RNA sequence: GGGAACGACUCGAGUAGAGUCGAAAAGAUAUGGAAUAGUCCGGAACUACACGGUCAGUCGGAAACGACUGCCGUGCCUCAUAACUAUUCCUAAGUCAAAACGCAGAGACCUUCGGGUCUCUGCGAAGGACUACUAAAGGUUCGCCUUUAGUAGUCCAAAAGAAACAACAACAACAAC
Reactivity to DMS in 0.01 (KOAc 150mM, MgCl2 10mM, bicine 150mM(pH8.5), 24C), signal-to-noise 2, nucleotides 027 to 126: g010a010u000a300u020g000g000a010a010u000a020g030u000c120c260g000g010a110a070c120u020a100c000a010c000g010g010u000c030a000g000u000c010g000g010a130a070a090c010g000a020c000u000g000c000c000g000u010g010c060c090u000c090a100u000a130a030c000u000a020u010u000c000c000u000a020a130g020u000c030a110a060a110a220c010g010c020a000g010a000g000a010c000c000u000u020c210g030g020g000u000c000u000c000u000g010c020g000a020a050
Reactivity to 2A3 in 0.01 (KOAc 150mM, MgCl2 10mM, bicine 150mM(pH8.5), 24C), signal-to-noise 3, nucleotides 027 to 126: g000a020u050a010u090g010g010a010a000u000a020g010u090c210c190g050g020a150a100c130u300a080c220a000c040g170g170u300c130a010g020u010c010g020g000a040a040a020c020g000a000c000u000g030c010c000g000u000g010c000c000u180c020a180u100a200a020c000u000a010u000u020c000c010u030a100a030g010u020c020a000a020a100a140c010g000c000a000g000a010g000a010c000c000u120u230c300g060g000g000u010c010u010c000u020g010c000g000a000a010
This 177-nucleotide RNA was probed chemically with DMS and 2A3. It was measured as part of the RMDB library TTRDEL. For DMS the reverse transcriptase was MarathonRT. Conditions: 150 mM KOAc, 10 mM MgCl2 and 150 mM bicine (pH 8.5), 24 C. The DMS profile rests on 1,462 reads.